[RMDB]
RNA sequence: GGGAACGACUCGAGUAGAGUCGAAAAGAUAUGGAUAAUCUAUUACCUUCGAAGAACAGAAUCGGAAACGAUUCUGGGAGAAGAAUAGAGUUAUCCUAAGUCAAAACAUCGCAGUUCGCUGCGAUGACUACUUGUGACUCUUCGGAGUCACAAGUAGAAAAGAAACAACAACAACAAC
Reactivity to 2A3 in 0.01 (KOAc 150mM, MgCl2 10mM, bicine 150mM(pH8.5), 24C), signal-to-noise 1, nucleotides 027 to 126: g060a000u060a030u210g010g000a000u020a050a030u050c010u000a020u000u130a300c040c000u030u060c090g300a300a120g000a050a020c000a010g020a000a010u000c000g030g020a140a030a060c010g000a000u030u080c000u000g030g000g000a030g020a040a000g000a020a000u020a010g020a010g250u050u020a010u020c020c010u010a080a000g050u030c020a000a000a040a150c010a000u000c000g000c010a010g030u110u110c220g190c170u030g000c010g000a000u000g000a070
Reactivity to DMS in 0.01 (KOAc 150mM, MgCl2 10mM, bicine 150mM(pH8.5), 24C), signal-to-noise 1, nucleotides 027 to 126: g000a030u000a270u000g000g010a000u010a000a100u000c000u000a000u010u000a150c300c010u030u000c000g020a090a240g080a280a270c000a000g000a000a000u000c010g000g020a140a120a210c010g010a020u000u000c010u000g000g000g020a090g020a020a020g010a010a010u000a000g000a060g040u010u000a020u000c010c000u030a050a260g000u010c030a060a030a160a180c030a000u000c000g050c000a000g020u010u000c290g010c000u000g010c010g040a010u000g000a100